[RMDB]
RNA sequence: GGGAACGACUCGAGUAGAGUCGAAAAGAUAUGGAAGCGUGCCUGAUGACCAUUACUACCCACCUCGGAAACGAGAGGUAAUGCAAGGGCCGCUUCCUAAGUCAAAACCACCGGUUCGCCGGUGGAAGUGACUAGACUGGUUCGCCAGUCUAGUCACAAAAGAAACAACAACAACAAC
Reactivity to 2A3 in 0.01 (KOAc 150mM, MgCl2 10mM, bicine 150mM(pH8.5), 24C), signal-to-noise 1, nucleotides 027 to 126: g040a010u130a100u130g010g010a010a010g000c000g190u300g040c080c010u120g070a300u090g000a090c040c030a040u010u030a030c020u070a050c000c000c050a100c050c030u020c000g020g000a100a030a010c010g000a000g010a000g020g030u010a000a030u080g000c050a160a270g010g030g000c010c000g000c000u010u000c000c030u000a040a010g030u000c010a010a030a100a190c000c010a000c000c010g010g100u090u040c300g040c120c000g030g020u000g000g000a020a050
Reactivity to DMS in 0.01 (KOAc 150mM, MgCl2 10mM, bicine 150mM(pH8.5), 24C), signal-to-noise 1, nucleotides 027 to 126: g040a050u000a180u000g000g000a010a030g000c000g020u000g020c000c000u030g000a100u000g030a300c300c000a040u000u000a020c000u000a060c040c070c020a300c130c000u000c000g000g000a050a150a180c000g000a010g000a080g000g040u000a000a020u030g000c060a030a130g000g000g010c000c000g040c000u000u000c010c000u010a000a070g000u000c060a040a170a140a110c020c000a000c000c000g000g030u000u010c220g030c000c000g010g010u040g000g000a000a060